[RMDB]
RNA sequence: GGGAACGACUCGAGUAGAGUCGAAAAUGCCUUGCGACAAGUGGUGCUUUCGCAGUCGGACACGACAUCGUCGAUCUGCUCAAGUGGAGAUCAUACUGACCAGUUUAGGAGCCCAUUCAAGAUAGCCAAUAUGCGGAAUGUUCGCAUUCCGCAUAUUAAAAGAAACAACAACAACAAC
Reactivity to 2A3 in 0.01 (KOAc 150mM, MgCl2 10mM, bicine 150mM(pH8.5), 24C), signal-to-noise 3, nucleotides 027 to 126: u080g010c010c000u030u030g030c020g030a040c080a170a050g020u000g110g040u110g070c030u070u040u030c040g000c030a030g010u040c050g050g020a070c030a010c110g150a020c050a080u090c040g090u000c020g030a040u010c020u040g070c010u030c070a150a030g070u050g050g040a070g010a030u060c020a020u070a120c010u030g020a080c010c040a040g000u010u040u090a080g010g030a010g040c000c020c020a000u060u050c020a010a020g020a160u100a030g070c040c010
Reactivity to DMS in 0.01 (KOAc 150mM, MgCl2 10mM, bicine 150mM(pH8.5), 24C), signal-to-noise 4, nucleotides 027 to 126: u000g000c010c010u000u010g020c030g010a040c130a060a080g010u010g010g010u010g020c080u000u000u000c070g030c050a080g000u010c040g000g010a110c210a080c080g010a070c070a080u000c120g010u000c060g000a070u020c030u000g000c040u000c080a070a100g020u010g020g010a080g000a080u000c040a080u010a090c080u000g000a080c070c010a080g010u010u000u000a100g000g000a110g010c020c030c020a100u010u010c100a050a110g020a100u000a100g000c060c130